[RMDB]
RNA sequence: GGGAACGACUCGAGUAGAGUCGAAAAGAUAUGGACAAUUGAACUACGCUCGCGCAACGAAGAACCCAAGUCAUUCGGAAACGAAUGACUUGGGGGAGUUGCUGAAUGAGCGCAAUUGUCCUAAGUCCUCUAAUCAAUAGUUCGCUAUUGAUUAGAGAAAAGAAACAACAACAACAAC
Reactivity to DMS in 0.01 (KOAc 150mM, MgCl2 10mM, bicine 150mM(pH8.5), 24C), signal-to-noise 7, nucleotides 027 to 126: g000a100u000a260u000g000g010a010c010a010a000u000u000g000a130a100c230u030a300c030g010c010u000c000g040c130g020c000a000a000c010g010a110a190g010a150a270c010c000c000a010a000g000u000c000a010u000u000c000g020g000a110a090a200c000g010a010a000u000g000a000c000u000u000g000g000g000g000g000a060g010u000u000g000c000u000g030a040a060u020g000a010g010c010g000c000a000a000u000u000g010u000c000c000u000a020a100g000u000c040
Reactivity to 2A3 in 0.01 (KOAc 150mM, MgCl2 10mM, bicine 150mM(pH8.5), 24C), signal-to-noise 5, nucleotides 027 to 126: g030a040u120a050u220g000g000a000c010a020a010u000u040g050a230a150c170u190a070c300g000c010u000c040g130c000g000c030a000a010c010g090a130a190g050a100a020c000c000c010a000a000g000u000c010a000u000u010c000g040g030a070a080a090c000g000a010a000u000g000a000c010u000u000g000g000g000g000g000a070g000u010u010g010c020u020g110a110a230u300g000a000g010c000g010c000a000a000u000u000g000u010c000c000u000a060a000g000u020c010
The record gives the reactivity of an RNA of 177 nucleotides to DMS and 2A3. DMS adducts were read by reverse transcription with MarathonRT. For 2A3, 20,041 sequencing reads were counted. The DMS profile rests on 11,900 reads. The RNA was probed in 150 mM KOAc, 10 mM MgCl2 and 150 mM bicine (pH 8.5) at 24 C. It was measured as part of the RMDB library TTRINS.